An RNA of 207 nucleotides, treated with DMS and 2A3 and read out base by base.
For 2A3, 3,273 sequencing reads were counted.
In probing experiments dimethyl sulfate is read out at A N1 and C N3, which are open when not base-paired.
The RNA was probed in 150 mM KOAc, 10 mM MgCl2 and 150 mM bicine (pH 8.5) at 24 C.
RNA sequence: GGGAACGACUCGAGUAGAGUCGAAAAGGUCCUUCGGGACCCAUAAGUCCUAAGUCCUGAGGGAGUUGUGCGCUUCCGAAGAACUAUUCGGAAACGAAUAGGGAGGAAGCCUACAACGACGAUCUCAGGAUAUGGAGUUAUCUUCAUUCGUGAAGAACUGAUCUGGAAUUUUCGAAUUCCAGAUCAGAAAAGAAACAACAACAACAAC
Reactivity to DMS in 0.01 (KOAc 150mM, MgCl2 10mM, bicine 150mM(pH8.5), 24C), signal-to-noise 2, nucleotides 027 to 156: g000g000u010c000c020u000u000c260g030g020g000a020c000c000c040a030u000a040a090g000u000c000c000u010a070a250g000u000c000c000u010g010a050g000g000g000a300g000u000u000g000u010g030c110g000c010u000u000c010c000g000a120a150g010a170a240c020u000a010u000u000c000g000g000a200a130a240c000g000a040a040u000a000g010g000g000a200g010g000a060a020g010c000c010u010a000c030a030a080c010g010a070c080g000a230u010c010u010c000a040g000g000a000u000a020u000g000g010a160g010u000u000a050u000c010u000u000c010a090u000u000c240g040u000g020a020a010g000a060a300
Reactivity to 2A3 in 0.01 (KOAc 150mM, MgCl2 10mM, bicine 150mM(pH8.5), 24C), signal-to-noise 2, nucleotides 027 to 156: g000g000u030c020c000u020u050c240g050g000g000a010c000c000c000a080u140a150a060g110u000c000c000u030a080a050g030u000c000c000u000g000a000g010g010g010a010g010u010u000g010u000g010c120g000c030u000u000c010c010g170a230a000g000a020a020c010u000a010u000u000c000g020g000a100a050a040c010g000a000a000u000a000g000g000g030a020g000g000a000a000g000c000c010u030a000c010a010a000c000g170a070c010g010a010u000c000u000c000a000g010g000a000u010a000u020g000g010a040g100u130u130a070u080c020u030u040c020a050u050u200c230g130u120g070a010a020g040a040a080